[RMDB]
RNA sequence: GGGAACGACUCGAGUAGAGUCGAAAAAAGUGGUUAGAUUCUUUCUAAAUUAGAGGCAAUUUGAAAUAAUUUAAAUUAGCUCAACCCUACUGCACUUACCGAACUAGAUAACGGUGUAGUAGGGGUACGAAGAGGAUAAGUUCGCUUAUCCUCUUCGAAAAGAAACAACAACAACAAC
Reactivity to DMS in 0.01 (KOAc 150mM, MgCl2 10mM, bicine 150mM(pH8.5), 24C), signal-to-noise 1, nucleotides 027 to 126: a060a050g020u000g020g010u010u000a050g040a130u000u010c040u000u010u010c040u030a050a050a180u020u020a070g020a170g000g010c010a040a010u010u000u010g010a040a090a110u010a100a100u000u000u000a010a000a020u000u000a200g000c010u000c060a100a140c000c000c000u000a010c000u000g000c000a000c010u000u000a030c120c030g020a080a140c140u010a050g000a050u000a130a060c210g020g040u000g000u010a010g000u000a010g000g010g000g020u000a010
Reactivity to 2A3 in 0.01 (KOAc 150mM, MgCl2 10mM, bicine 150mM(pH8.5), 24C), signal-to-noise 1, nucleotides 027 to 126: a000a000g120u040g030g070u070u050a110g000a150u070u020c000u050u070u000c050u150a100a170a200u100u080a070g020a020g090g020c000a000a000u050u050u000g020a030a020a070u170a080a110u200u040u000a110a050a040u090u020a090g000c000u000c040a040a000c000c000c000u000a000c000u000g020c000a000c000u010u010a040c100c060g180a180a050c070u100a040g100a300u070a160a130c050g000g000u010g000u000a000g000u000a000g040g000g020g010u000a000